[RMDB]
RNA sequence: GGGAACGACUCGAGUAGAGUCGAAAAAUCCGCAUCGGAUAGCAACUCCAGGCAAUUGCAAUACGUACCCCUGCCACUCAGUCCCGAAUCGAAUGAGACCAUGGAGCGGCGCAAGCUGAAGAGCAUAGAAACAUUGUCUAUUCGUAGACAAUGUUUCAAAAGAAACAACAACAACAAC
Reactivity to DMS in 0.01 (KOAc 150mM, MgCl2 10mM, bicine 150mM(pH8.5), 24C), signal-to-noise 7, nucleotides 027 to 126: a070u000c010c010g030c150a080u010c080g010g010a110u000a080g020c090a070a090c070u000c020c020a080g010g020c090a070a090u010u000g010c060a070a070u000a070c100g020u000a120c050c010c010c020u000g010c030c030a050c040u000c050a090g000u010c000c000c000g010a080a080u010c110g010a070a070u000g010a080g010a090c050c070a080u010g000g010a090g020c070g010g020c050g020c120a050a060g010c030u000g000a080a060g000a070g010c070a090u000a100
Reactivity to 2A3 in 0.01 (KOAc 150mM, MgCl2 10mM, bicine 150mM(pH8.5), 24C), signal-to-noise 4, nucleotides 027 to 126: a000u010c010c010g000c040a110u100c050g040g000a050u050a040g010c020a020a050c030u000c020c030a020g060g000c030a080a170u090u090g020c010a040a110u090a210c080g080u110a080c030c000c000c030u020g000c010c000a050c020u050c010a020g030u020c010c000c010g010a040a050u110c030g010a030a040u130g010a050g040a060c020c010a020u090g060g000a030g020c000g000g000c000g010c020a030a030g000c010u020g010a050a010g020a030g060c020a020u050a110
Chemical mapping of a 177-nucleotide RNA with DMS and 2A3. The 2A3 profile rests on 6,154 reads. Reactivities are given for positions 27 through 126. The DMS profile rests on 7,979 reads. It was measured as part of the RMDB library OK2TST.